[RMDB]
RNA sequence: GGGAACGACUCGAGUAGAGUCGAAAACGCAAGACCUGGUCGACGAGACCGUCCGCACCACGUUGCUGCGAGGGCGUCUGGUCACACCCGCUCAACCGGCGUGACACCGGCAUCACGAGAACCAGAGCGGUAGCAAGACCUUCGGGUCUUGCUACCGAAAAGAAACAACAACAACAAC
Reactivity to DMS in 0.01 (KOAc 150mM, MgCl2 10mM, bicine 150mM(pH8.5), 24C), signal-to-noise 1, nucleotides 027 to 126: c100g000c030a050a110g000a100c050c000u010g000g010u000c030g000a130c140g020a300g000a000c000c000g000u050c000c000g000c130a030c100c080a120c300g020u000u000g000c040u020g000c000g030a180g000g010g070c050g040u140c040u030g040g080u000c050a130c250a110c010c060c020g030c010u020c170a210a200c230c010g000g000c000g000u000g000a120c060a200c020c020g020g000c080a220u000c140a000c140g000a140g000a010a110c000c000a140g000a000g030
Reactivity to 2A3 in 0.01 (KOAc 150mM, MgCl2 10mM, bicine 150mM(pH8.5), 24C), signal-to-noise 2, nucleotides 027 to 126: c120g030c040a010a010g080a040c000c060u050g080g020u070c050g000a120c040g050a050g050a120c020c000g020u030c000c000g000c020a020c030c000a040c090g050u030u110g070c100u000g020c000g040a130g010g030g010c010g050u050c010u070g120g000u070c000a000c010a000c040c010c010g040c020u020c010a070a140c040c010g060g000c080g060u050g010a010c040a010c070c020g050g030c010a020u050c010a010c010g070a060g000a060a050c010c020a060g030a020g080